[RMDB]
RNA sequence: GGGAACGACUCGAGUAGAGUCGAAAAUAUUCAGGCCAGCGCAAUAAACGGAAUUCGGAACACCAAAGGCGCUAAUCUCUUUUGAAUCCUGAUCCACAAUUUCAGAUUGACGCGCCAGAAAUAACGCUUUCAACCCCAUUUUACGGCACUGAGCCGCGAUGUAGUGGGCAUUCGUGCCCACUACAUCAAAAGAAACAACAACAACAAC
Reactivity to 2A3 in 0.01 (KOAc 150mM, MgCl2 10mM, bicine 150mM(pH8.5), 24C), signal-to-noise 2, nucleotides 027 to 156: u170a000u070u050c070a070g030g020c030c020a000g040c020g000c030a000a040u080a060a130a000c030g010g030a070a010u140u080c090g060g030a070a080c100a060c020c090a100a040a050g020g020c000g010c040u000a020a060u030c040u070c000u200u100u000u040g030a020a010u050c010c040u060g070a080u100c080c010a110c060a090a050u000u070u070c010a020g140a150u010u030g040a060c050g000c000g020c010c000a020g080a010a060a010u100a010a020c070g020c030u010u170u110c050a080a100c030c000c030c000a020u050u040u070u150a020c030g000g000c010a000c050u070g130a050g010c000c000g000c070